[RMDB]
RNA sequence: GGGAACGACUCGAGUAGAGUCGAAAAAGGCGCCACGCCGAGCGAUGGUUAAAUAUGAUAAGGACACUUAGACGCCAGCGCAGUGUGACCCAGACGUCUAUAGAAAACUGGUAGAACCGGAGCGCAACUUCUUCACUUCCUUCGGGAAGUGAAGAAGAAAAGAAACAACAACAACAAC
Reactivity to 2A3 in 0.01 (KOAc 150mM, MgCl2 10mM, bicine 150mM(pH8.5), 24C), signal-to-noise 2, nucleotides 027 to 126: a100g050g000c020g010c020c010a040c040g000c000c020g010a000g020c020g050a060u000g010g050u020u040a070a300a110u190a100u110g140a070u050a090a040g110g040a030c010a040c160u040u060a070g070a080c120g000c000c020a000g000c010g000c020a000g000u060g040u060g070a040c010c040c040a000g040a100c030g000u000c000u050a090u040a090g120a040a130a020a040c070u030g050g000u070a010g050a080a050c010c030g000g000a020g000c030g010c030a050a050
Reactivity to DMS in 0.01 (KOAc 150mM, MgCl2 10mM, bicine 150mM(pH8.5), 24C), signal-to-noise 2, nucleotides 027 to 126: a000g050g030c030g000c030c000a120c020g020c000c050g030a090g010c020g000a050u010g000g000u000u030a090a110a080u010a020u050g010a130u010a050a090g000g000a190c150a050c090u000u000a030g000a140c210g000c000c000a050g000c070g010c020a050g110u030g000u070g010a130c030c010c130a040g020a030c150g000u050c040u030a040u030a150g000a090a010a130a140c020u000g020g000u020a010g000a130a150c030c000g020g000a090g000c040g000c120a060a120
Structure probing data (2A3 and DMS) for a 177-nucleotide construct. The DMS profile rests on 1,410 reads. The RNA was probed in 150 mM KOAc, 10 mM MgCl2 and 150 mM bicine (pH 8.5) at 24 C.